Annotation: Structure probing data (2A3 and DMS) for a 177-nucleotide construct. Values cover nucleotides 27 to 126. The RNA was probed in 150 mM KOAc, 10 mM MgCl2 and 150 mM bicine (pH 8.5) at 24 C. It was measured as part of the RMDB library M2PK90.
[RMDB]
RNA sequence: GGGAACGACUCGAGUAGAGUCGAAAAUCUAAGAGCGUAACACACACUCAGACUGUACGACAGUCUGACACACACAUACGCUAGUGUAUCGUGUGUGUGAUAUCGAUGUAGCUCGAAAAUGAAAGAAGUAGGAGUUAGUCUUCGGACUAACUCCUACAAAAGAAACAACAACAACAAC
Reactivity to 2A3 in 0.01 (KOAc 150mM, MgCl2 10mM, bicine 150mM(pH8.5), 24C), signal-to-noise 2, nucleotides 027 to 126: u020c000u040a200a010g000a040g000c010g100u200a210a000c000a000c020a000c020a020c040u000c020a020g020a000c010u070g040u230a100c200g190a090c210a000g000u000c000u010g050a000c000a030c020a000c000a000c010a000u040a040c000g170c120u120a150g080u040g050u200a060u040c110g000u020g000u040g000u000g000u010g020a000u040a010u170c120g090a100u010g030u020a030g000c010u020c040g010a050a050a000a010u170g100a070a000a090g060a120a040
Reactivity to DMS in 0.01 (KOAc 150mM, MgCl2 10mM, bicine 150mM(pH8.5), 24C), signal-to-noise 2, nucleotides 027 to 126: u060c010u010a070a220g030a020g010c000g030u040a070a070c140a020c110a090c130a070c170u000c000a010g010a010c000u000g010u000a140c260g020a100c020a010g020u000c000u000g010a030c110a040c000a010c020a000c020a040u000a010c020g000c180u000a130g030u010g010u000a000u000c100g010u010g000u010g000u000g000u000g000a070u010a100u010c060g020a090u000g010u010a190g020c010u000c000g000a020a060a090a070u000g020a050a090a070g010a060a100